[RMDB]
Record summary: An RNA of 177 nucleotides, treated with DMS and 2A3 and read out base by base. The DMS profile rests on 2,684 reads. 2A3 adducts were read by reverse transcription with SuperScript II with manganese. The RNA was probed in 150 mM KOAc, 10 mM MgCl2 and 150 mM bicine (pH 8.5) at 24 C.
RNA sequence: GGGAACGACUCGAGUAGAGUCGAAAAUGUCCAGUCCCUCCCCGUUCCUGGAGAAGGGAGACUCGGGAACGCCUAGCAUCUGAGGGACGAAGCCGCCCCCGGGCGCUCCCCUCGGAGGUCCACUGGGACUAUCUAUCUCGUUCGCGAGAUAGAUAGUAAAAGAAACAACAACAACAAC
Reactivity to DMS in 0.01 (KOAc 150mM, MgCl2 10mM, bicine 150mM(pH8.5), 24C), signal-to-noise 3, nucleotides 027 to 126: u010g000u010c020c000a080g000u000c040c020c010u010c010c020c060c010g010u000u000c020c000u010g020g010a060g010a110a130g010g010g010a120g010a100c010u000c020g010g000g000a020a060c070g010c070c070u010a100g000c100a130u000c040u020g000a040g000g000g020a170c070g000a050a250g010c080c080g030c040c020c010c130c200g000g010g020c030g000c020u000c010c000c010c010u000c010g000g010a020g000g010u000c090c170a130c030u000g000g000g010
Reactivity to 2A3 in 0.01 (KOAc 150mM, MgCl2 10mM, bicine 150mM(pH8.5), 24C), signal-to-noise 1, nucleotides 027 to 126: u110g040u000c000c000a000g070u030c000c000c000u010c000c000c010c000g020u010u020c010c000u070g200g020a020g030a060a060g110g040g000a060g060a010c030u010c010g010g000g010a010a010c000g020c000c030u020a020g020c010a070u050c030u030g010a030g010g000g010a030c020g000a030a000g080c100c010g000c010c020c030c000c000g050g010g000c010g050c010u010c000c000c000c000u000c000g000g000a010g000g020u040c030c010a030c040u020g010g040g020